[RMDB]
RNA sequence: GGGAACGACUCGAGUAGAGUCGAAAACGCAGUUCGCUGCGACGCCGACCUUUGUGUAGUUUAAAGAGUGAGGAGGUACGGAAUUCUGCCCAUUGGGCAGGGAGAUGUACUACCCACCCUCAAACUACACUCUGGUAUUUGUCCCAUUCGUGGGAAAGGGGAACUAACUUUUCGAAGUUAGUUCCCCAAAAGAAACAACAACAACAAC
Reactivity to 2A3 in 0.01 (KOAc 150mM, MgCl2 10mM, bicine 150mM(pH8.5), 24C), signal-to-noise 3, nucleotides 027 to 156: c020g040c000a000g030u100u090c170g030c100u020g000c010g040a030c020g070c020c050g030a020c000c000u020u020u000g120u010g000u000a000g000u000u030u050a140a210a010g020a010g010u020g010a200g060g000a090g040g000u000a000c020g020g000a020a030u020u000c000u020g000c000c000c100a300u210u300g000g000g000c000a000g000g000g010a080g000a010u060g000u000a000c000u120a160c000c000c000a020c010c010c000u030c020a010a030a000c000u000a000c000a000c000u020c000u010g000g000u020a120u120u190u180g060u020c030c000c010a010u100u130c180g110u110g030g030g000a030a030a150